The record gives the reactivity of an RNA of 207 nucleotides to 2A3. For 2A3, 636 sequencing reads were counted.
RNA sequence: GGGAACGACUCGAGUAGAGUCGAAAACUAGGACUACAGGCGUGCAUCACCAUGCCGGGCUAAUUUUGUAGAGAUAGGGUCUCAUCAUGUUGCCUAGGCUGGUCUUGAACUCCUGGGCUCAAGCAAUUCUCCUGUCUCAGCCUCCCAAAGUGCUGGGUCUGUGAGCAUGAUUCGUCAUGCUCACAGAAAAAGAAACAACAACAACAAC
Reactivity to 2A3 in 0.01 (KOAc 150mM, MgCl2 10mM, bicine 150mM(pH8.5), 24C), signal-to-noise 1, nucleotides 027 to 156: c000u050a040g070g030a030c000u150a100c110a040g000g000c020g000u030g040c010a070u030c000a060c140c000a110u240g000c000c000g010g000g000c010u060a060a030u200u230u120u160g040u170a060g000a020g010a030u150a130g180g020g100u000c020u000c040a070u000c030a000u050g020u060u060g040c010c010u100a270g000g000c080u010g000g000u000c000u030u070g010a130a010c000u010c010c000u000g000g000g000c000u000c040a050a040g020c000a080a140u080u160c020u020c030c030u000g000u050c000u000c000a000g000c010c000u120c020c020c050a040a110a020g100u160g030c000u000g020g010g010